Conditions: 150 mM KOAc, 10 mM MgCl2 and 150 mM bicine (pH 8.5), 24 C. The record gives the reactivity of an RNA of 177 nucleotides to DMS and 2A3. Values cover nucleotides 27 to 126. For DMS, 10,451 sequencing reads were counted. The 2A3 profile rests on 7,597 reads.

RNA sequence: GGGAACGACUCGAGUAGAGUCGAAAACUGAGGUUUUGGACAAUCCCACGCACUUAGACCUAAUGGACUUGUGGAUUCGCAAGCCCAAGUUCAUCUUGGUUAAGUCAUGGUCUAUUUUGGGAAAGGCGACAAAAGAACUUUUCGAAGUUCUUUUGUCAAAAGAAACAACAACAACAAC
Reactivity to DMS in 0.01 (KOAc 150mM, MgCl2 10mM, bicine 150mM(pH8.5), 24C), signal-to-noise 8, nucleotides 027 to 126: c020u010g010a140g020g020u000u000u000u010g000g010a090c080a090a230u000c080c010c000a090c230g020c160a030c040u000u000a040g030a020c000c000u000a060a020u000g000g010a000c000u000u000g000u010g030g000a070u000u000c300g010c300a110a150g010c010c000c000a010a010g000u000u000c010a010u000c090u010u000g010g010u000u000a030a030g000u010c070a100u010g010g010u010c070u000a070u000u000u000u010g000g000g000a040a050a130g010g020c180
Reactivity to 2A3 in 0.01 (KOAc 150mM, MgCl2 10mM, bicine 150mM(pH8.5), 24C), signal-to-noise 6, nucleotides 027 to 126: c030u050g030a070g130g080u050u050u110u120g090g040a030c040a050a060u020c010c010c010a020c040g060c020a020c020u030u030a050g070a130c010c000u010a020a010u010g000g000a010c010u020u020g100u290g140g020a050u190u160c080g010c200a120a070g000c000c000c010a000a000g000u000u010c000a000u010c050u050u070g030g000u030u050a010a000g020u010c030a050u110g030g020u000c020u110a130u110u160u080u100g050g020g030a060a090a020g110g020c070